[RMDB]
RNA sequence: GGGAACGACUCGAGUAGAGUCGAAAACAUCAUCUAAAGGGGAAAUAUUAUGUUGACAUAAUACAUAAAGUUAGCAUCUGUUGUUCCUUACUUUGGAUUAUAAAUCCAGACUAAUGGAUCUAUGGAGACAGUUACACACGUUCGCGUGUGUAACUGUAAAAGAAACAACAACAACAAC
Reactivity to DMS in 0.01 (KOAc 150mM, MgCl2 10mM, bicine 150mM(pH8.5), 24C), signal-to-noise 1, nucleotides 027 to 126: c080a080u040c120a060u000c000u000a000a000a030g020g010g020g000a060a050a080u010a090u010u000a030u000g010u000u010g000a070c030a030u000a070a170u020a220c230a070u000a090a150a080g000u020u000a020g000c010a010u000c170u000g000u000u000g010u000u000c000c010u000u000a150c060u010u000u000g030g000a030u000u000a050u010a020a050a040u000c000c040a000g050a110c250u010a090a080u000g000g000a010u010c030u000a080u000g000g030a070g010
Reactivity to 2A3 in 0.01 (KOAc 150mM, MgCl2 10mM, bicine 150mM(pH8.5), 24C), signal-to-noise 1, nucleotides 027 to 126: c000a020u130c000a010u000c020u030a000a030a000g000g010g000g000a000a040a020u070a050u080u060a020u030g010u010u040g020a010c020a040u120a080a020u080a100c070a010u090a080a070a040g010u030u000a010g000c000a010u000c050u050g030u050u050g040u000u050c020c000u080u020a070c030u060u070u000g000g000a000u020u070a050u070a050a040a040u040c020c000a010g160a190c090u240a070a210u040g010g020a040u000c010u090a120u070g090g020a030g070
Chemical mapping of a 177-nucleotide RNA with DMS and 2A3.
For 2A3 the reverse transcriptase was SuperScript II with manganese.
It was measured as part of the RMDB library OK2TST.
The reactions ran in a buffer of 150 mM KOAc, 10 mM MgCl2 and 150 mM bicine (pH 8.5), at 24 C.
For 2A3, 820 sequencing reads were counted.